[RMDB]
RNA sequence: GGGAACGACUCGAGUAGAGUCGAAAAGCAGUAUAUGACUUAGGAGGUGGUACAUUUGAUAUAUCUAUUUUAGAAAUUUUAGGAGGUGUAUUUGAAGUAAAAGCAACAAAUGGUAAUACAUCCUUAGCACGUAUAGCGGAUUCGUCCGCUAUACGUGAAAAGAAACAACAACAACAAC
Reactivity to DMS in 0.01 (KOAc 150mM, MgCl2 10mM, bicine 150mM(pH8.5), 24C), signal-to-noise 1, nucleotides 027 to 126: g020c090a080g000u020a090u010a090u000g010a090c050u000u000a090g000g010a110g000g010u000g000g000u030a110c030a030u000u000u000g010a070u010a090u000a090u010c000u000a090u020u000u000u000a050g000a110a100a140u010u000u000u010a080g020g020a090g000g030u000g020u040a030u000u010u000g010a010a130g010u010a040a080a070a130g040c090a050a180c110a040a010a050u000g020g010u010a030a060u000a060c100a100u010c050c000u000u000a090g010
Conditions: 150 mM KOAc, 10 mM MgCl2 and 150 mM bicine (pH 8.5), 24 C. This 177-nucleotide RNA was probed chemically with DMS.